[RMDB]
RNA sequence: GGGAACGACUCGAGUAGAGUCGAAAAACGCCGGCGCGCUCAAGCGCCUGUCCCAGGCGCAGAUAGGUCAUUCCAUCCAGCGGAUCCAGGCUGAUGCAGCCCAGGCGCUGUCGCUCGGGUGCAGGUCGUAACUGUCUGAUUUCGAUCAGACAGUUACAAAAGAAACAACAACAACAAC
Reactivity to 2A3 in 0.01 (KOAc 150mM, MgCl2 10mM, bicine 150mM(pH8.5), 24C), signal-to-noise 2, nucleotides 027 to 126: a000c040g040c040c040g120g010c020g000c010g000c030u080c130a120a050g010c020g010c000c010u010g030u000c000c020c000a010g030g020c000g020c020a000g030a100u190a140g020g080u090c060a120u200u050c060c000a030u000c020c030a040g000c020g030g000a030u030c060c030a030g030g000c010u060g050a120u190g000c070a060g030c010c000c020a040g050g010c040g040c100u060g080u170c040g000c020u030c060g020g020g000u040g000c030a010g020g090u140c070
Reactivity to DMS in 0.01 (KOAc 150mM, MgCl2 10mM, bicine 150mM(pH8.5), 24C), signal-to-noise 3, nucleotides 027 to 126: a100c130g030c050c030g000g030c100g020c020g000c140u000c110a160a130g000c030g010c010c010u000g000u000c000c000c010a300g000g010c000g030c050a080g000a070u000a080g020g000u010c170a110u000u010c030c020a090u010c040c050a070g030c030g020g020a120u010c060c050a090g000g010c010u000g000a130u000g010c040a060g000c000c010c030a170g000g000c040g030c110u000g010u000c030g010c020u010c040g010g000g010u000g020c050a080g000g000u020c120
The record gives the reactivity of an RNA of 177 nucleotides to 2A3 and DMS. DMS adducts were read by reverse transcription with MarathonRT. The DMS profile rests on 3,150 reads. 2A3 adducts were read by reverse transcription with SuperScript II with manganese. Reactivities are given for positions 27 through 126.